The record gives the reactivity of an RNA of 177 nucleotides to DMS and 2A3. The reactions ran in a buffer of 150 mM KOAc, 10 mM MgCl2 and 150 mM bicine (pH 8.5), at 24 C. It was measured as part of the RMDB library TTRDEL.
RNA sequence: GGGAACGACUCGAGUAGAGUCGAAAAGAUAUGGAUGUGUCAACGAUGCACUAUAUCCUCGGAAACGAGGAUACGAAUGACCCAUUUGACACAUCCUAAGUCAAACGCCCUACUUCGGUAGGGCGAAGGAGAUGUCAGUGUUCGCACUGACAUCUCCAAAAGAAACAACAACAACAAC
Reactivity to DMS in 0.01 (KOAc 150mM, MgCl2 10mM, bicine 150mM(pH8.5), 24C), signal-to-noise 1, nucleotides 027 to 126: g010a000u000a090u030g000g000a000u000g020u000g000u020c010a090a110c300g020a190u030g000c060a070c100u000a200u010a000u000c000c000u000c000g000g020a000a070a030c000g000a010g000g000a020u000a000c110g000a190a110u020g000a230c090c080c000a210u000u000u000g010a010c000a010c000a000u000c000c000u000a000a070g000u010c000a110a200a120c010g020c000c000c000u000a000c000u000u000c160g000g020u010a000g030g010g000c000g000a010a040
Reactivity to 2A3 in 0.01 (KOAc 150mM, MgCl2 10mM, bicine 150mM(pH8.5), 24C), signal-to-noise 1, nucleotides 027 to 126: g000a000u030a000u040g000g000a010u000g000u000g010u020c000a000a020c130g130a140u180g010c010a000c050u000a010u000a000u060c000c000u020c020g000g020a000a000a000c000g000a000g010g020a000u010a010c000g140a070a300u260g080a120c000c000c140a050u010u030u000g000a000c020a000c010a000u030c000c000u000a000a000g010u000c000a070a010a100c020g010c010c010c000u010a020c000u010u050c250g110g000u000a000g000g000g000c030g000a010a010